[RMDB]
RNA sequence: GGGAACGACUCGAGUAGAGUCGAAAAGAUCGAGAGUGUUCACGAGUGUUCACGUACUCACACUCGAGUGAACACGAUCGAACUCGAACGAGUUCGAGUUCGUACACACACACACACGAGAUCGUUCGAACGAUCGAGUUCACGAGUGAGAACGAGACUUCCUUAGGAGUUUCGACUCCUAAGGAAGAAAAGAAACAACAACAACAAC
Reactivity to DMS in 0.01 (KOAc 150mM, MgCl2 10mM, bicine 150mM(pH8.5), 24C), signal-to-noise 2, nucleotides 027 to 156: g030a070u000c020g000a110g040a140g030u000g030u000u000c010a080c020g030a200g040u000g030u000u000c040a090c130g010u000a100c070u000c030a110c020a080c030u000c030g000a170g030u000g030a020a030c010a100c000g030a070u000c020g010a020a120c080u000c000g010a050a060c040g010a080g010u010u000c020g000a080g030u000u020c020g040u010a120c090a130c120a090c060a140c060a200c080a090c000a190c040g010a130g010a040u010c010g020u000u010c060g010a040a190c010g020a030u010c020g010a130g030u000u000c030a080c000g000a110g040u000g000a150g000a060a080c040g000a150g010a150
Reactivity to 2A3 in 0.01 (KOAc 150mM, MgCl2 10mM, bicine 150mM(pH8.5), 24C), signal-to-noise 6, nucleotides 027 to 156: g070a070u100c070g010a000g000a030g080u100g020u040u060c050a020c100g030a040g030u080g030u060u100c070a030c130g060u090a060c030u020c050a020c010a020c020u020c030g050a080g030u030g000a010a000c010a010c010g000a010u010c000g010a030a040c020u000c000g010a020a010c020g010a010g080u060u030c000g000a010g030u030u080c050g070u170a060c080a010c010a010c010a000c000a000c000a000c150a010c010g010a020g010a090u010c000g010u030u030c030g010a160a110c020g000a010u020c000g000a020g010u030u020c030a020c030g020a020g020u040g020a080g030a060a010c040g010a020g040a080
The data come from the RNA Mapping Database (RMDB), library OK3TST. This 207-nucleotide RNA was probed chemically with DMS and 2A3. The RNA was probed in 150 mM KOAc, 10 mM MgCl2 and 150 mM bicine (pH 8.5) at 24 C.